The record gives the reactivity of an RNA of 177 nucleotides to DMS and 2A3. The DMS profile rests on 3,915 reads. The reactions ran in a buffer of 150 mM KOAc, 10 mM MgCl2 and 150 mM bicine (pH 8.5), at 24 C.
RNA sequence: GGGAACGACUCGAGUAGAGUCGAAAAGGGGUGUGCUCAGAGCAGGUGGCCUGAAGAAUGGCUUCUCUGUUUACAACACACCCAAGAAGAAUCUGGGACCAUUGUAAUGAGGGGCACAAGCAGUUCCGAUUAAAUAGUGCUUCGGCACUAUUUAAUCAAAAGAAACAACAACAACAAC
Reactivity to DMS in 0.01 (KOAc 150mM, MgCl2 10mM, bicine 150mM(pH8.5), 24C), signal-to-noise 4, nucleotides 027 to 126: g010g000g030g020u000g020u000g000c030u010c110a290g010a030g010c000a010g000g010u000g000g000c000c000u010g010a140a120g010a200a170u010g000g000c000u000u010c020u020c000u000g010u000u000u000a120c120a020a050c020a000c010a020c000c000c000a040a040g000a130a140g000a090a060u010c070u000g010g010g010a070c030c040a080u000u000g010u010a070a050u000g000a080g010g000g010g010c140a020c060a050a060g020c120a090g000u000u000c040c050
Reactivity to 2A3 in 0.01 (KOAc 150mM, MgCl2 10mM, bicine 150mM(pH8.5), 24C), signal-to-noise 3, nucleotides 027 to 126: g050g010g000g020u000g000u000g000c020u050c120a040g030a010g070c000a000g000g000u020g000g010c010c010u040g060a120a050g130a140a120u160g000g000c000u010u020c130u000c000u010g010u000u010u040a040c030a050a000c000a000c000a010c000c000c000a000a020g010a000a000g040a020a050u060c050u090g010g010g010a020c020c010a070u030u080g040u070a100a090u100g030a030g030g010g010g000c010a030c010a040a050g060c020a010g010u030u010c030c000